[RMDB]
RNA sequence: GGGAACGACUCGAGUAGAGUCGAAAACGAACUUGUAUGCGCCAUCAGCGCGCUUGCCCAUGGAGCCUUCGAAUCCAAGUCCUGUGUGGCGACGUUCGACUUCGCUGAACUGUUCGAUGGAGGUGACGACUCCGAAUACAUUCGUGUAUUCGGAGUCAAAAGAAACAACAACAACAAC
Reactivity to 2A3 in 0.01 (KOAc 150mM, MgCl2 10mM, bicine 150mM(pH8.5), 24C), signal-to-noise 4, nucleotides 027 to 126: c030g050a020a020c040u120u110g040u140a090u170g060c010g010c010c030a210u120c090a120g010c010g000c000g000c120u000u050g020c000c010c010a040u070g080g030a050g030c010c040u040u060c030g100a100a070u060c060c000a040a020g040u010c000c060u130g030u040g070u140g170g000c040g010a030c030g040u060u130c020g060a130c070u060u050c040g010c020u030g020a070a040c020u050g040u120u100c030g020a070u060g040g040a040g030g000u080g040a050c080
Reactivity to DMS in 0.01 (KOAc 150mM, MgCl2 10mM, bicine 150mM(pH8.5), 24C), signal-to-noise 5, nucleotides 027 to 126: c080g000a070a050c070u000u000g020u010a070u010g020c000g010c030c020a170u010c220a130g010c140g030c030g000c010u000u010g030c020c010c050a120u010g010g010a160g000c040c040u000u000c050g010a090a080u020c060c070a050a080g000u000c020c020u010g010u000g010u010g010g020c020g010a080c140g000u000u000c070g010a080c080u000u000c050g010c020u010g000a040a080c080u000g010u010u020c050g020a090u000g010g010a040g010g010u000g000a170c180
Annotation:
This 177-nucleotide RNA was probed chemically with 2A3 and DMS. DMS (dimethyl sulfate) methylates the pairing face of unpaired adenines and cytosines. Source: RMDB library OK2TRN, as collected in RNAgym. DMS adducts were read by reverse transcription with MarathonRT. Values cover nucleotides 27 to 126.